[RMDB]
RNA sequence: GGGAACGACUCGAGUAGAGUCGAAAAGUCUAGCGAUUUAGGGAUCCGAUCCGGGUCGCAGAACUCAACUGCAUGAGUAUACACGCAAGUCGCGUAUUGGCCGACCGUCCAAGGAUCUGCUAGACGACCUAGCUACUCCUUUCGAGGAGUAGCUAGGAAAAGAAACAACAACAACAAC
Reactivity to 2A3 in 0.01 (KOAc 150mM, MgCl2 10mM, bicine 150mM(pH8.5), 24C), signal-to-noise 2, nucleotides 027 to 126: g010u000c000u010a010g000c020g110a100u010u070u250a230g000g000g130a000u000c020c020g010a030u000c050c050g130g000g020u000c010g000c000a000g060a050a010c020u030c040a050a150c150u300g040c130a170u080g020a000g020u010a030u040a060c040a000c010g000c070a130a130g140u200c040g000c020g040u020a060u040u100g090g010c060c030g000a020c010c020g040u060c070c010a090a040g030g010a000u000c030u030g020c010u010a010g000a000c000g000a000
Reactivity to DMS in 0.01 (KOAc 150mM, MgCl2 10mM, bicine 150mM(pH8.5), 24C), signal-to-noise 2, nucleotides 027 to 126: g000u000c020u000a050g010c000g000a090u000u000u010a160g000g010g000a020u000c160c040g020a090u010c080c090g020g020g000u010c000g040c040a120g000a110a070c060u000c050a050a110c130u010g000c170a130u010g000a060g000u000a100u000a030c030a050c050g000c050a150a090g020u010c020g030c020g000u000a040u000u000g020g010c080c030g000a060c020c010g010u000c030c070a080a190g000g000a000u000c020u000g010c000u000a010g000a040c020g000a070